[RMDB]
RNA sequence: GGGAACGACUCGAGUAGAGUCGAAAAGAUAUGGACCGGCAAGGGAGUCGUGUCGGAAACGACCGACGAGGAUCUUGCGGUCCUAAGUCAAAACUUUCAGGAACUAGUUCGCUAGUUCCUGAAAGAACUCCAUAAGUCUGUUCGCAGACUUAUGGAGAAAAGAAACAACAACAACAAC
Reactivity to 2A3 in 0.01 (KOAc 150mM, MgCl2 10mM, bicine 150mM(pH8.5), 24C), signal-to-noise 3, nucleotides 027 to 126: g020a020u070a050u140g000g010a000c010c050g270g200c020a000a010g010g010g030a030g000u010c010g030u060g020u300c010g020g000a070a100a010c040g010a000c010c010g010a000c010g060a210g010g010a000u010c000u000u000g000c000g000g000u000c010c000u010a050a000g040u020c030a020a030a130a230c010u000u000u000c000a010g000g000a010a000c000u000a010g010u050u110c240g030c170u000a000g000u000u000c020c000u000g000a000a000a000g000a000a000
Reactivity to DMS in 0.01 (KOAc 150mM, MgCl2 10mM, bicine 150mM(pH8.5), 24C), signal-to-noise 2, nucleotides 027 to 126: g010a070u000a300u010g000g000a010c000c000g020g030c000a010a000g010g000g000a090g020u000c000g010u010g040u000c000g010g010a060a060a240c010g010a000c010c000g010a010c010g010a090g030g000a030u000c000u000u000g010c000g000g000u000c000c000u000a010a040g010u010c050a110a110a080a150c000u000u000u000c000a010g000g000a000a000c000u000a000g020u000u010c210g010c010u000a010g020u000u000c000c000u000g000a000a000a030g010a100a160